[RMDB]
RNA sequence: GGGAACGACUCGAGUAGAGUCGAAAAGGAAGACCCUUCCGUUGUGAUAGAAGUGCUGAGGAACCAGCACGCCCGGCUUUAAUGGGCGCAUACACAGUUUACGACCGCAUAGAGUGCCUUGGCAAGCGAAGCAGUAUUUAUUCGUAAAUACUGCUUCAAAAGAAACAACAACAACAAC
Reactivity to 2A3 in 0.01 (KOAc 150mM, MgCl2 10mM, bicine 150mM(pH8.5), 24C), signal-to-noise 9, nucleotides 027 to 126: g050g010a030a030g100a100c030c000c000u040u020c060c040g020u020u030g020u020g070a160u090a170g150a180a040g060u020g020c000u010g010a070g060g040a050a030c040c000a010g010c010a010c010g000c000c000c000g060g000c040u140u150u200a080a090u180g000g020g000c020g010c010a020u100a120c080a000c020a070g020u060u090u110a100c080g040a110c020c040g010c060a020u060a080g090a020g070u080g020c000c000u060u080g040g000c070a060a020g050c050
Reactivity to DMS in 0.01 (KOAc 150mM, MgCl2 10mM, bicine 150mM(pH8.5), 24C), signal-to-noise 9, nucleotides 027 to 126: g000g000a050a050g000a210c040c020c010u000u010c010c020g020u000u000g020u010g000a130u020a090g000a090a130g010u000g000c010u000g000a080g010g010a130a090c050c030a040g010c020a110c020g000c020c010c050g000g000c100u020u020u040a060a090u040g000g000g000c020g020c160a060u020a080c120a090c110a070g000u020u020u020a080c110g010a080c050c070g000c070a090u020a080g010a090g020u000g010c020c020u000u000g000g010c050a080a120g000c230